Chemical mapping of a 177-nucleotide RNA with DMS and 2A3. Conditions: 150 mM KOAc, 10 mM MgCl2 and 150 mM bicine (pH 8.5), 24 C. The DMS profile rests on 1,637 reads. Reactivities are rounded to 0.1 and cut off at 0 and 3.
RNA sequence: GGGAACGACUCGAGUAGAGUCGAAAAAAAAGAUAUGGAAGUGUGCCUUCGGGAACAUGUAGGGACCAAUGAUGGAAAUCGGAAACGAUUUCUUGAGGUCAUUACAUGAAGCUUCCUAAGUCAAAAACCCUUAGAAAAUGUUCGCAUUUUCUAAGGGAAAAGAAACAACAACAACAAC
Reactivity to DMS in 0.01 (KOAc 150mM, MgCl2 10mM, bicine 150mM(pH8.5), 24C), signal-to-noise 2, nucleotides 027 to 126: a040a110a130a080g000a030u000a300u010g000g010a020a010g010u000g040u010g020c000c010u000u030c250g040g010g010a090a300c000a000u000g000u000a000g000g000g010a010c010c030a110a150u000g010a200u020g000g000a010a000a000u010c000g000g000a140a040a160c010g000a010u010u000u000c000u000u000g000a090g010g010u010c010a020u000u000a010c010a010u000g000a230a240g030c010u000u000c000c000u010a060a140g000u010c010a070a070a120a110a080
Reactivity to 2A3 in 0.01 (KOAc 150mM, MgCl2 10mM, bicine 150mM(pH8.5), 24C), signal-to-noise 1, nucleotides 027 to 126: a000a020a000a030g050a080u120a030u140g020g000a000a000g020u030g070u160g150c050c040u070u120c300g150g010g000a080a050c020a020u000g000u000a000g040g030g000a000c000c040a110a300u130g050a010u130g040g000a020a000a000u000c000g010g040a060a000a050c020g010a030u000u000u020c000u000u010g020a000g010g000u020c000a010u000u030a000c000a000u010g000a040a010g010c000u030u000c010c010u030a170a040g070u040c030a010a000a020a070a300
The 2A3 profile rests on 1,998 reads.